[RMDB]
RNA sequence: GGGAACGACUCGAGUAGAGUCGAAAAGAUGAGUCAGCCCCCAGACGCUCGGGAAACGGAUUAUUCCGGUCGACUCCGGAGAAACAAAGUCAAGCGAAGACCCCCUCCCCAAAGGUAGAGGAGUCAGCCUGAUCGGACUGUUCGCAGUCUGAUCAGGAAAAGAAACAACAACAACAAC
Reactivity to 2A3 in 0.01 (KOAc 150mM, MgCl2 10mM, bicine 150mM(pH8.5), 24C), signal-to-noise 2, nucleotides 027 to 126: g030a050u100g020a010g000u010c000a010g010c000c000c000c000c000a000g010a040c010g000c030u000c000g010g020g000a010a040a010c000g010g000a000u020u050a070u200u000c000c000g000g000u000c010g000a000c050u000c080c000g000g000a000g020a000a010a000c010a010a010a000g000u030c020a030a070g050c020g080a030a000g010a010c010c000c000c000c010u010c000c000c000c000a070a030a000g010g000u090a030g000a030g020g000a000g000u020c000a010g010
Reactivity to DMS in 0.01 (KOAc 150mM, MgCl2 10mM, bicine 150mM(pH8.5), 24C), signal-to-noise 3, nucleotides 027 to 126: g000a090u010g000a090g020u010c030a120g000c080c010c020c000c040a080g000a090c060g000c030u000c020g000g000g010a080a090a070c040g030g010a090u020u040a060u020u000c000c000g000g000u000c070g010a040c090u040c000c000g000g000a050g010a090a040a160c160a020a060a050g000u010c010a080a090g000c080g020a050a040g000a080c020c010c010c020c020u010c010c000c010c090a030a070a060g010g000u010a050g010a120g010g010a110g010u000c070a100g000
This 177-nucleotide RNA was probed chemically with 2A3 and DMS. Source: RMDB library OK1LIB, as collected in RNAgym. Reactivities are given for positions 27 through 126.